[RMDB]
RNA sequence: GGGAACGACUCGAGUAGAGUCGAAAAGGGAAUCGCCGCACCCGCCAUGACGGUGGCGGUCAGGCGGGCCAACGCGAAGGAUCUCGCGCGGCGCAGGCUGCUGGAAUCCGGGGGCUAACCGUCGAAGGGAGUGGGUAUGUUUCGACAUACCCACUCCAAAAGAAACAACAACAACAAC
Reactivity to DMS in 0.01 (KOAc 150mM, MgCl2 10mM, bicine 150mM(pH8.5), 24C), signal-to-noise 1, nucleotides 027 to 126: g010g010g000a130a080u050c010g030c020c030g000c140a270c300c000c010g060c000c040a060u010g020a070c170g030g040u000g020g050c080g000g010u000c170a060g000g000c040g020g070g010c090c050a000a090c020g020c040g010a090a090g000g000a050u000c050u000c000g000c000g000c100g000g000c010g010c100a000g000g000c010u020g010c030u020g000g000a060a050u000c020c040g000g000g000g000g020c190u000a040a060c060c000g000u000c000g030a180a180g000

Source information
An RNA of 177 nucleotides, treated with DMS and read out base by base. The data come from the RNA Mapping Database (RMDB), library OK2TRN.